Structure probing data (DMS) for a 177-nucleotide construct. The reactions ran in a buffer of 150 mM KOAc, 10 mM MgCl2 and 150 mM bicine (pH 8.5), at 24 C. DMS adducts were read by reverse transcription with MarathonRT.
RNA sequence: GGGAACGACUCGAGUAGAGUCGAAAAAUCGGCAUGUUUUGUGGUAGGUUAAGAUUCGCAGUUGCGGUAUUGGCUUGGGCAACAAUUGCGCUCACCAUCUCUUGCGCCGUGAUAGCAUGACUCGUACCGAUUGGGAUCCCUUCGGGGAUCCCAAUCGAAAAGAAACAACAACAACAAC
Reactivity to DMS in 0.01 (KOAc 150mM, MgCl2 10mM, bicine 150mM(pH8.5), 24C), signal-to-noise 1, nucleotides 027 to 126: a060u000c040g000g000c030a070u000g000u010u000u000u010g050u070g000g000u000a030g030g020u000u030a040a080g020a090u000u000c020g010c010a120g000u020u000g030c060g000g040u010a060u000u000g020g010c100u000u000g000g010g060c020a050a100c150a080a150u040u000g040c090g030c130u000c030a030c020c030a030u000c070u000c020u000u000g010c050g020c040c050g020u000g010a110u000a080g030c020a060u010g000a010c080u030c040g020u040a150c110